[RMDB]
RNA sequence: GGGAACGACUCGAGUAGAGUCGAAAAGCUGGACUAAGAUGUGAUGCUGGGUAGGUUAGGUGUAUUCAAUGCAUUUUCAGCUCCUGAUAUUUCCAACUUACUAUGGGUUUAUCAGAUGUAGCCAACAUCAUUAGAUAAGGAGCAUCUGUAUAUGUGACUAAAUGCUGGUAUUCGUACCAGCAUUUAGAAAAGAAACAACAACAACAAC
Reactivity to DMS in 0.01 (KOAc 150mM, MgCl2 10mM, bicine 150mM(pH8.5), 24C), signal-to-noise 5, nucleotides 027 to 156: g020c030u000g040g020a170c110u000a100a080g010a110u000g030u010g010a060u000g020c040u010g010g010g040u000a060g020g020u000u000a060g020g010u000g010u000a060u000u010c030a090a090u000g010c020a130u010u000u000u000c080a090g010c030u000c030c010u000g000a080u000a060u000u000u000c010c010a060a100c080u010u000a080c140u000a120u010g010g020g020u000u000u000a060u000c010a050g010a100u000g020u000a140g030c050c050a030a140c140a080u000c030a140u000u010a100g010a060u020a040a280g010g010a300g000c020a050u000c010u010g010u010a080u000a050u010g010u000g010a210
Reactivity to 2A3 in 0.01 (KOAc 150mM, MgCl2 10mM, bicine 150mM(pH8.5), 24C), signal-to-noise 6, nucleotides 027 to 156: g020c020u010g020g000a040c040u080a070a050g020a150u080g050u070g040a040u090g020c050u040g010g010g080u050a070g030g050u050u040a050g010g050u070g020u080a110u030u120c080a060a050u060g000c030a030u050u020u040u170c040a020g010c010u020c000c020u050g030a040u010a040u110u060u030c030c020a050a040c060u100u150a050c020u100a170u140g030g030g030u040u080u060a050u040c010a000g000a020u020g030u050a040g040c030c010a020a040c020a090u040c010a050u030u250a050g020a030u050a060a080g000g000a010g000c000a010u000c000u010g070u010a040u020a030u190g080u060g060a010